[RMDB]
RNA sequence: GGGAACGACUCGAGUAGAGUCGAAAACGGCUCAGUCUCCUGUUUCUUGGCCACUCCAUCCAGGUACAUCUGAGGCCAUGCCAUCACCUGGCGCACGCGCAGAAGCGCCUCGAGCAGCUGCAUCUGAUACAUGUGCUGAUUGCUAGACGCCGCCACACCGCUGAUAAUUGUUCGCAAUUAUCAGCGGAAAAGAAACAACAACAACAAC
Reactivity to 2A3 in 0.01 (KOAc 150mM, MgCl2 10mM, bicine 150mM(pH8.5), 24C), signal-to-noise 1, nucleotides 027 to 156: c020g010g010c010u050c120a030g020u010c020u000c010c020u000g050u020u100u140c080u030u020g030g000c050c090a070c100u000c060c080a070u060c010c010a030g010g000u040a100c070a060u010c080u070g050a000g020g010c000c000a040u090g000c000c010a010u090c030a070c020c050u050g010g000c000g020c000a050c060g070c000g000c020a020g020a300a030g050c000g020c040c000u040c050g040a020g000c000a020g000c000u020g020c010a040u030c040u060g100a160u100a220c080a020u090g050u020g000c030u010g030a300u030u050g030c000u010a010g000a080c050g010c020c000g020c050c000a060c000a030